[RMDB]
RNA sequence: GGGAACGACUCGAGUAGAGUCGAAAACUCGUGAAGUUCUUGUAGAAGUAUGUAAGCUCAACGGAACCUUUCUAAACACAGGAACAGAUGAACACUAUGUAUCUGUCUUUGCCGGUCUAUCCCUAACCUACUCAGUACUACUGGGAGAUGCACUGGUAGAAGGGUUCUAAUUCGUUAGAACCCUUCUAAAAGAAACAACAACAACAAC
Reactivity to 2A3 in 0.01 (KOAc 150mM, MgCl2 10mM, bicine 150mM(pH8.5), 24C), signal-to-noise 4, nucleotides 027 to 156: c020u020c040g040u060g060a060a030g010u060u030c040u090u090g030u100a070g030a240a010g030u090a020u200g100u170a070a070g030c020u030c100a070a050c090g010g000a030a050c000c000u030u200u000c060u100a080a100a030c110a020c010a090g080g020a030a000c000a000g080a060u090g130a160a020c030a030c110u190a100u210g040u020a050u070c010u020g070u030c000u050u060u040g020c020c000g000g000u000c000u010a070u030c010c000c020u020a090a090c000c010u060a100c020u070c090a020g060u110a240c060u060a050c030u080g000g020g000a030g000a020u080g020c080a010c090u040g000g010u000
Reactivity to DMS in 0.01 (KOAc 150mM, MgCl2 10mM, bicine 150mM(pH8.5), 24C), signal-to-noise 2, nucleotides 027 to 156: c010u000c040g020u000g040a100a290g010u020u000c000u000u010g030u000a070g040a090a180g010u010a040u000g020u000a120a090g030c040u020c050a120a110c070g010g010a070a150c040c010u000u000u010c060u000a050a110a060c130a110c080a040g000g000a060a040c010a050g010a050u000g000a070a100c050a110c060u000a080u000g010u000a070u000c010u020g010u000c030u000u000u020g020c020c010g020g030u000c060u000a080u010c010c000c010u010a060a100c090c000u000a070c040u010c020a050g000u010a100c110u010a070c090u000g030g000g020a050g010a080u000g010c140a090c030u000g010g020u000